[RMDB]
RNA sequence: GGGAACGACUCGAGUAGAGUCGAAAAAGUGGCGCAGCAGCAUGACGGCGAUUUGCGCGCGGUAGUUGACGCGCUGGUUGCCGAGCUGGUGAUUUAGCCGAUGCGGGCUGGCUGAGUGUGACGUCCGCCAAUCGGCGUGAUUCGUCACGCCGAUUGGAAAAGAAACAACAACAACAAC
Reactivity to 2A3 in 0.01 (KOAc 150mM, MgCl2 10mM, bicine 150mM(pH8.5), 24C), signal-to-noise 6, nucleotides 027 to 126: a010g170u160g000g000c040g000c020a060g000c000a000g020c020a070u130g150a110c020g000g000c000g010a010u010u020u130g020c010g000c010g000c010g030g060u200a210g050u060u170g070a140c010g000c000g000c000u000g020g030u010u010g010c000c000g000a020g000c020u030g010g140u050g070a090u060u120u300a030g000c010c000g010a010u100g020c020g020g020g010c040u070g000g030c050u060g050a050g120u160g040u040g050a040c040g010u020c010c000g010
Reactivity to DMS in 0.01 (KOAc 150mM, MgCl2 10mM, bicine 150mM(pH8.5), 24C), signal-to-noise 3, nucleotides 027 to 126: a130g010u030g020g010c010g000c020a060g010c010a050g000c010a130u020g020a150c040g000g010c000g020a010u000u010u000g020c010g000c010g010c120g030g010u020a140g020u030u030g010a200c010g000c000g040c000u000g000g010u000u000g000c000c020g010a090g010c000u010g000g000u000g000a100u020u020u020a120g000c000c000g010a070u030g010c040g000g000g000c030u020g010g000c040u010g010a100g010u030g000u010g010a100c090g010u010c010c010g000
The record gives the reactivity of an RNA of 177 nucleotides to 2A3 and DMS. For 2A3, 5,535 sequencing reads were counted. For DMS the reverse transcriptase was MarathonRT. Conditions: 150 mM KOAc, 10 mM MgCl2 and 150 mM bicine (pH 8.5), 24 C. It was measured as part of the RMDB library OK1LIB.